[RMDB]
RNA sequence: GGGAACGACUCGAGUAGAGUCGAAAAAAAGUGAGAAAGAUGGUGGCUAAAUCCUCAUUAGGGGGUGAUGCCUAUGCUUGAAUGUAUAGUUUUACUCCUGGAAAGGAGCUAGACUUGUCUGUGUUUGCAGUAUAUGGAGUUUCGACUCCAUAUACUGAAAAGAAACAACAACAACAAC
Reactivity to 2A3 in 0.01 (KOAc 150mM, MgCl2 10mM, bicine 150mM(pH8.5), 24C), signal-to-noise 7, nucleotides 027 to 126: a010a000a000g190u140g030a100g060a030a060a000g060a040u170g030g180u070g010g000c010u030a030a070a090u180c000c010u030c020a100u100u300a130g050g010g020g010g010u030g010a030u110g000c000c000u020a050u130g000c010u040u040g040a080a020u100g040u070a040u060a140g010u010u000u020u070a010c000u000c000c000u010g050g100a080a090a060g010g000a010g000c010u030a020g000a010c010u020u060g020u060c090u070g080u020g030u020u070u060g030
Reactivity to DMS in 0.01 (KOAc 150mM, MgCl2 10mM, bicine 150mM(pH8.5), 24C), signal-to-noise 8, nucleotides 027 to 126: a060a040a040g020u010g000a100g010a110a050a040g010a050u010g010g020u010g000g010c010u010a180a130a060u010c000c000u000c010a210u010u020a140g010g010g000g010g000u000g000a180u020g000c030c010u000a040u020g000c010u000u000g000a120a070u010g010u000a030u010a010g010u000u000u000u010a130c010u000c000c000u010g000g050a100a160a010g010g000a010g010c070u000a020g000a020c020u000u000g000u000c080u010g010u000g010u000u010u010g010
Structure probing data (2A3 and DMS) for a 177-nucleotide construct. Values cover nucleotides 27 to 126. It was measured as part of the RMDB libraries RFM100 and RFMREP.